[RMDB]
RNA sequence: GGGAACGACUCGAGUAGAGUCGAAAACGUAUAUUAAAGUUGUUGCGGUUAAAACGUUUGUAGUUGAACUUGUGUUUCAUGCGGGUAGUACAACUUACAAUUGUGGUAAGCGUAUUACCGGUGGAGUAAAACGUAUACUGUUCGCAGUAUACGUUUUAAAAGAAACAACAACAACAAC
Reactivity to 2A3 in 0.01 (KOAc 150mM, MgCl2 10mM, bicine 150mM(pH8.5), 24C), signal-to-noise 1, nucleotides 027 to 126: c040g080u080a100u020a040u180u300a220a180a140g000u000u000g020u030u040g060c050g070g010u130u110a090a210a000a000c040g000u080u070u160g030u020a190g060u060u060g010a000a030c030u050u010g040u000g020u050u030u020c010a020u220g300c050g040g040g000u010a000g010u010a000c000a080a020c160u000u030a000c010a110a300u190u140g110u220g130g000u000a010a000g000c010g080u000a000u030u030a000c010c030g070g020u010g000g060a010g000u030
Reactivity to DMS in 0.01 (KOAc 150mM, MgCl2 10mM, bicine 150mM(pH8.5), 24C), signal-to-noise 3, nucleotides 027 to 126: c050g010u030a130u010a080u020u030a090a110a170g010u000u010g010u000u040g000c300g010g020u000u000a100a060a090a080c090g000u010u010u030g010u010a100g010u000u000g000a070a090c130u000u010g030u000g010u000u000u000c000a140u010g010c040g000g000g020u000a020g000u010a010c010a080a100c000u010u000a010c010a110a260u020u030g030u020g020g020u000a000a000g000c300g020u000a010u000u000a010c000c000g020g060u020g000g010a110g000u020
Annotation: The record gives the reactivity of an RNA of 177 nucleotides to 2A3 and DMS. 2A3 adducts were read by reverse transcription with SuperScript II with manganese. The reactions ran in a buffer of 150 mM KOAc, 10 mM MgCl2 and 150 mM bicine (pH 8.5), at 24 C. For DMS the reverse transcriptase was MarathonRT. It was measured as part of the RMDB libraries RFM100 and RFMREP.